The record gives the reactivity of an RNA of 207 nucleotides to 2A3. The RNA was probed in 150 mM KOAc, 10 mM MgCl2 and 150 mM bicine (pH 8.5) at 24 C. For 2A3, 944 sequencing reads were counted. For 2A3 the reverse transcriptase was SuperScript II with manganese. It was measured as part of the RMDB library RSTRND.

[RMDB]
RNA sequence: GGGAACGACUCGAGUAGAGUCGAAAAAGGUUGGCGAACGCUACUCUGUGAUUCAGGUCGAGAGUGAGUCUCCUCUCGCAAAUCAAGGCUCAAAACAAAAGUAAAUGCGAAUAACAUCGUAAAAUUUGCUCGUAAGGACGCUCUAGUAGCUGCCUAAGAGUGAUAUCGGGUUCGCCCGAUAUCACUCAAAAGAAACAACAACAACAAC
Reactivity to 2A3 in 0.01 (KOAc 150mM, MgCl2 10mM, bicine 150mM(pH8.5), 24C), signal-to-noise 2, nucleotides 027 to 156: a060g100g000u080u030g010g020c040g010a070a010c080g000c040u010a020c050u020c090u100g020u040g080a100u240u090c040a050g020g030u080c000g000a010g000a010g000u020g000a000g030u020c120u060c120c000u000c000u000c010g160c260a000a020a000u030c000a000a020g010g010c020u010c000a010a060a040a000c080a030a070a040a000g030u030a010a020a030u030g030c000g020a010a030u160a200a060c030a020u010c000g030u070a070a030a060a150u020u060u000g020c020u020c010g080u100a030a050g040g000a000c020g030c030u040c020u040a150g070u180a010g020c030u020g010c010c000u070a160a020